[RMDB]
The record gives the reactivity of an RNA of 177 nucleotides to DMS.
The data come from the RNA Mapping Database (RMDB), library OK2TST.
RNA sequence: GGGAACGACUCGAGUAGAGUCGAAAAUUGUUGACGCGGUUGUUCAACAAACUGGGCACCGAUCUACUCAAUUCGAUGCACAGCAAGAUUUGGAAGACGCUACAGGUGGUCCACGAAUAUUUCCCCAGUAUCCUCGACGUUUCGACGUCGAGGAUACAAAAGAAACAACAACAACAAC
Reactivity to DMS in 0.01 (KOAc 150mM, MgCl2 10mM, bicine 150mM(pH8.5), 24C), signal-to-noise 1, nucleotides 027 to 126: u010u010g010u010u000g000a060c080g010c280g010g000u050u050g020u000u010c010a010a060c010a030a070a150c070u000g000g000g000c010a050c010c000g020a150u000c030u000a140c130u000c030a070a090u010u010c010g010a190u000g010c040a030c150a050g000c060a070a100g010a050u020u000u020g000g020a030a100g000a050c110g050c100u000a130c080a060g000g050u000g000g000u000c010c050a070c070g010a080a130u000a090u000u010u000c010c000c000c210a090